Chemical mapping of a 207-nucleotide RNA with 2A3.
The data come from the RNA Mapping Database (RMDB), library OK3TST.
Conditions: 150 mM KOAc, 10 mM MgCl2 and 150 mM bicine (pH 8.5), 24 C.
[RMDB]
RNA sequence: GGGAACGACUCGAGUAGAGUCGAAAAGUGCUUUGAACUGCUAAUUAGCAUAUAUUUUAUUCUAGCUUAUAUUGUUCACCCAAACUUAAAAGGCUAUUUGCCUUCUAGGCCAUGAGCUGUUUGAGGGUAGAGAAUAUGCAAAAGAAACAACCACACAACUACCUCGUAGUUUCGACUACGAGGUAGUAAAAGAAACAACAACAACAAC
Reactivity to 2A3 in 0.01 (KOAc 150mM, MgCl2 10mM, bicine 150mM(pH8.5), 24C), signal-to-noise 4, nucleotides 027 to 156: g030u030g000c030u030u080u090g050a080a060c050u070g030c030u080a100a140u120u120a080g000c020a010u040a010u020a040u060u170u070u020a130u060u000c040u020a010g000c000u100u020a030u020a020u140u120g020u050u020c000a080c010c010c000a010a020a000c020u090u120a070a080a000a000g020g000c000u030a120u090u080u110g000c010c000u040u020c050u060a030g020g000c010c020a120u200g040a070g070c020u020g060u120u080u070g080a080g000g010g000u050a020g010a000g020a010a030u070a050u120g060c110a170a000a000a000g010a000a000a000c010a000a000c000c300a010c010a000c000a000